[RMDB]
RNA sequence: GGGAACGACUCGAGUAGAGUCGAAAAGGAGGCUUUUCACGGCCUGGACGUGAAAUUCCACACACAGGCUUUUUCCGCUCACGGCAGCGGGAGAGAAGUCAUUGAUGCCAUGUGCCAUGCCACCAAAGCGUGGUCGAGACUUCGGUCUCGACUACGCAAAAGAAACAACAACAACAAC
Reactivity to 2A3 in 0.01 (KOAc 150mM, MgCl2 10mM, bicine 150mM(pH8.5), 24C), signal-to-noise 5, nucleotides 027 to 126: g110g020a050g000g010c000u030u030u000u020c050a020c030g020g010c000c040u020g020g060a050c040g020u020g050a060a010a040u140u040c020c010a040c000a000c000a000c000a010g000g000c000u100u020u000u040u000c020c000g020c000u000c010a280c090g220g010c080a000g000c010g020g010g000a010g000a010g000a040a010g010u000c070a080u040u180g040a040u080g030c030c070a090u100g030u030g040c050c010a060u090g030c000c010a050c010c000a080a040a000
Reactivity to DMS in 0.01 (KOAc 150mM, MgCl2 10mM, bicine 150mM(pH8.5), 24C), signal-to-noise 2, nucleotides 027 to 126: g010g010a090g000g000c010u000u000u050u000c050a110c170g000g000c000c010u040g000g000a090c170g030u040g000a040a150a150u080u050c140c100a160c090a060c090a100c020a000g010g000c010u000u000u010u000u020c030c010g010c000u000c020a130c070g000g040c130a070g020c000g000g000g000a000g000a010g010a030a040g000u010c020a070u060u020g000a120u050g000c040c000a030u030g000u000g000c030c010a080u040g000c000c010a060c020c030a090a080a120